[RMDB]
RNA sequence: GGGAACGACUCGAGUAGAGUCGAAAAGGGAAGUUGAUGGGCCAGUGAUUUUCCCGACGCGGUGCCGGUGCUCACAACACACAUGGGUGCCGGAGUCAGUCAGCUCAGCGGCCACGGACUGAUGUGAAGUCGUCAGUGGAUUCGUCCACUGACGACUAAAAGAAACAACAACAACAAC
Reactivity to DMS in 0.01 (KOAc 150mM, MgCl2 10mM, bicine 150mM(pH8.5), 24C), signal-to-noise 1, nucleotides 027 to 126: g030g000g000a000a040g010u000u000g030a120u000g000g000g000c020c020a110g020u000g020a090u000u000u010u000c010c030c030g030a130c070g010c130g000g040u040g010c010c010g000g010u010g000c010u000c090a030c200a120a060c180a140c130a090c110a100u000g000g000g000u000g000c010c010g000g000a030g000u000c020a070g010u010c020a130g000c050u000c050a070g010c110g010g010c010c060a140c110g000g020a040c040u010g000a050u000g010u000g000a180
The record gives the reactivity of an RNA of 177 nucleotides to DMS. The data come from the RNA Mapping Database (RMDB), library OK2TST.